[RMDB]
RNA sequence: GGGAACGACUCGAGUAGAGUCGAAAAUUUUGGUUAAGCAUUUAUGCCUGGUAAACUGAUGGAGAGACUGCUGGUAUAUUGGAAGAUGAGUCUGGGAGAUGUUUAAUGCUGGUAUCCAAAAAAUGUCCUUCUAACUGUUCUUCGGAACAGUUAGAAGAAAAGAAACAACAACAACAAC
Reactivity to DMS in 0.01 (KOAc 150mM, MgCl2 10mM, bicine 150mM(pH8.5), 24C), signal-to-noise 2, nucleotides 027 to 126: u010u000u010u000g020g010u010u010a150a100g000c010a030u000u010u010a050u020g010c030c040u010g020g000u010a060a080a120c080u000g000a080u000g030g010a090g010a080g000a060c050u000g010c030u010g010g010u000a070u000a080u000u000g000g000a060a070g010a090u000g000a080g020u000c040u000g000g000g000a080g000a050u000g010u000u000u000a070a050u000g000c010u010g010g040u010a040u000c040c030a010a010a050a020a050a130u010g000u000c090
Reactivity to 2A3 in 0.01 (KOAc 150mM, MgCl2 10mM, bicine 150mM(pH8.5), 24C), signal-to-noise 2, nucleotides 027 to 126: u070u010u010u030g060g000u060u080a030a000g040c020a010u040u040u080a070u150g030c000c020u020g020g050u080a070a120a060c040u060g020a130u100g030g020a040g010a030g020a130c040u010g020c040u070g120g020u070a130u040a060u160u100g090g000a040a040g010a080u030g020a020g030u010c030u080g050g010g040a080g000a000u060g050u090u100u080a020a010u030g000c010u000g030g070u120a130u080c010c030a090a000a000a000a000a080u110g050u080c010

An RNA of 177 nucleotides, treated with DMS and 2A3 and read out base by base. For 2A3, 1,378 sequencing reads were counted. For DMS the reverse transcriptase was MarathonRT. Reactivities are given for positions 27 through 126.